[RMDB]
Structure probing data (2A3 and DMS) for a 177-nucleotide construct. Values cover nucleotides 27 to 126. The reactions ran in a buffer of 150 mM KOAc, 10 mM MgCl2 and 150 mM bicine (pH 8.5), at 24 C. It was measured as part of the RMDB library OK1LIB. For DMS, 2,687 sequencing reads were counted.

RNA sequence: GGGAACGACUCGAGUAGAGUCGAAAAAGGAAUGGCUCAUUGCCAAGCCCCCAUCCUCAUUCAACUUAAAGCUACUGCCACCCCAAUCUCCAUCCGGCAGUACCCCAUGCCCCAUGAAGCUUACCAAAUUUGGUGGCUAAUUCGUUAGCCACCAAAUAAAAGAAACAACAACAACAAC
Reactivity to 2A3 in 0.01 (KOAc 150mM, MgCl2 10mM, bicine 150mM(pH8.5), 24C), signal-to-noise 3, nucleotides 027 to 126: a000g100g010a080a020u090g010g010c020u030c120a150u030u240g010c000c000a000a030g000c000c000c010c000c000a030u040c000c040u050c010a070u110u030c060a080a060c070u060u120a190a020a010g000c030u020a010c010u040g010c000c010a040c000c030c030c010a020a060u050c020u030c030c010a070u030c000c000g010g010c010a030g020u050a080c000c000c010c000a040u080g000c020c000c020c010a030u110g070a050a000g070c030u020u080a080c040c020a090a040
Reactivity to DMS in 0.01 (KOAc 150mM, MgCl2 10mM, bicine 150mM(pH8.5), 24C), signal-to-noise 2, nucleotides 027 to 126: a070g060g000a020a060u000g020g000c020u050c230a160u060u020g040c060c010a070a100g020c020c000c010c030c050a040u000c020c010u020c050a120u010u000c110a120a100c120u010u020a060a090a110g000c040u000a020c060u010g010c030c000a070c040c000c020c050a090a060u030c020u010c050c050a020u010c090c070g000g000c080a060g010u020a040c030c020c000c020a040u000g000c050c000c010c000a060u010g000a120a080g010c010u000u020a160c070c080a050a150